[RMDB]
RNA sequence: GGGAACGACUCGAGUAGAGUCGAAAACCUUGGUCCUUCGGGACCAAGGAAACCCGAUGACAUACAGACUGUGGGCGGCGAGACAAUCCACAAGAGUCGCUAAAAGCGUCUGGUUCGCCAGACGCAACUAAAGUUAUCCGUUCGCGGAUAACUUUAGAAAAGAAACAACAACAACAAC
Reactivity to DMS in 0.01 (KOAc 150mM, MgCl2 10mM, bicine 150mM(pH8.5), 24C), signal-to-noise 3, nucleotides 027 to 126: c000c000u000u000g010g020u000c000c000u000u020c190g010g030g030a020c000c000a000a010g000g010a000a060a070c030c010c020g020a110u000g010a120c030a120u010a100c170a080g020a140c080u000g020u000g000g010g030c300g030g000c060g000a080g010a090c050a090a090u000c020c020a040c070a050a150g000a100g000u000c020g000c130u020a040a080a110a120g000c010g010u000c000u000g000g000u000u000c190g020c000c000a000g000a010c010g010c000a020a030
Reactivity to 2A3 in 0.01 (KOAc 150mM, MgCl2 10mM, bicine 150mM(pH8.5), 24C), signal-to-noise 2, nucleotides 027 to 126: c000c000u000u000g000g000u000c030c000u000u030c190g080g000g040a000c000c000a000a000g000g000a040a010a010c010c000c020g030a150u110g090a010c040a080u270a050c040a040g130a060c030u030g000u050g030g000g000c030g010g030c050g020a050g010a060c040a030a050u000c020c020a020c010a040a060g120a000g020u040c010g000c080u110a110a100a090a040g000c010g010u000c000u000g000g020u040u000c220g000c030c000a000g020a000c010g010c000a010a000
Source: RMDB library M2PK50, as collected in RNAgym. Chemical mapping of a 177-nucleotide RNA with DMS and 2A3. For DMS the reverse transcriptase was MarathonRT. For DMS, 1,938 sequencing reads were counted. The reactions ran in a buffer of 150 mM KOAc, 10 mM MgCl2 and 150 mM bicine (pH 8.5), at 24 C. Reactivities are given for positions 27 through 126.